Conditions: 150 mM KOAc, 10 mM MgCl2 and 150 mM bicine (pH 8.5), 24 C. The record gives the reactivity of an RNA of 177 nucleotides to 2A3 and DMS.

[RMDB]
RNA sequence: GGGAACGACUCGAGUAGAGUCGAAAAGAUAUGGACGAUGAUGUGGGAGCGUAUCGGGUCGGAAACGACCCAAUACGCGCGAAACCACAUAUCGUCCUAAGUCAAAAGUGACAGUUCGCUGUCACAACGUUCAGGAAUUGUUCGCAAUUCCUGAACGAAAAGAAACAACAACAACAAC
Reactivity to 2A3 in 0.01 (KOAc 150mM, MgCl2 10mM, bicine 150mM(pH8.5), 24C), signal-to-noise 2, nucleotides 027 to 126: g000a020u040a040u140g010g000a000c000g000a000u200g040a030u030g080u000g010g040g020a300g040c000g010u000a000u000c000g000g000g010u010c020g010g000a030a010a010c020g000a000c000c010c010a000a000u010a000c000g040c010g000c000g150a190a040a030c010c000a000c000a000u020a000u010c010g010u010c000c000u000a020a000g040u000c020a030a060a000a150g020u010g020a000c000a000g010u060u110c300g120c190u020g000u010c000a000c010a000a040
Reactivity to DMS in 0.01 (KOAc 150mM, MgCl2 10mM, bicine 150mM(pH8.5), 24C), signal-to-noise 2, nucleotides 027 to 126: g010a020u000a230u010g000g000a030c000g000a010u000g000a020u010g060u000g010g000g010a150g030c000g050u000a010u010c030g040g010g010u010c000g000g000a040a040a070c000g000a000c000c000c000a010a000u000a000c000g000c000g030c220g000a100a090a150c000c000a010c000a010u000a050u000c010g020u000c000c000u000a000a050g010u000c020a060a070a140a120g000u000g000a020c000a000g010u000u010c300g060c030u000g000u010c000a010c000a070a140
For DMS the reverse transcriptase was MarathonRT. For DMS, 3,082 sequencing reads were counted. It was measured as part of the RMDB library TTRDES.